Structure probing data (DMS and 2A3) for a 177-nucleotide construct. It was measured as part of the RMDB library OK1LIB. The 2A3 profile rests on 6,996 reads.
[RMDB]
RNA sequence: GGGAACGACUCGAGUAGAGUCGAAAAUCGAUUUUUGGCUUUACUUCAUCAAUAAAUUCUUGUGAUAAUUUUACUAAAUCAAAUGCAUCACUUAUUUGCAUUAAAGCUAUGAACUCAUCUUGAGGCAGCUACUGGUACUAUUCGUAGUACCAGUAGCAAAAGAAACAACAACAACAAC
Reactivity to DMS in 0.01 (KOAc 150mM, MgCl2 10mM, bicine 150mM(pH8.5), 24C), signal-to-noise 2, nucleotides 027 to 126: u100c200g020a070u000u000u000u000u000g020g000c030u020u000u000a010c010u010u020c260a170u060c100a110a030u010a040a070a180u000u000c080u020u020g000u000g000a050u000a050a100u010u010u000u000a150c180u030a070a050a180u000c190a010a010a010u000g000c130a020u020c030a020c170u030u030a100u020u030u000g000c090a020u000u000a030a040a160g000c040u000a020u030g000a100a090c000u020c020a050u040c090u020u020g000a020g010g020c190a120
Reactivity to 2A3 in 0.01 (KOAc 150mM, MgCl2 10mM, bicine 150mM(pH8.5), 24C), signal-to-noise 9, nucleotides 027 to 126: u180c050g040a060u010u030u000u030u050g000g000c000u020u010u000a010c010u100u080c030a110u030c030a040a180u170a220a120a120u240u050c060u100u140g020u030g070a050u040a150a140u040u050u060u090a170c140u190a080a120a140u120c060a010a030a020u050g020c030a010u030c010a030c050u120u200a100u150u130u060g020c020a030u060u050a100a050a020g010c020u030a050u200g060a080a050c010u010c030a140u100c120u080u160g010a030g070g020c020a020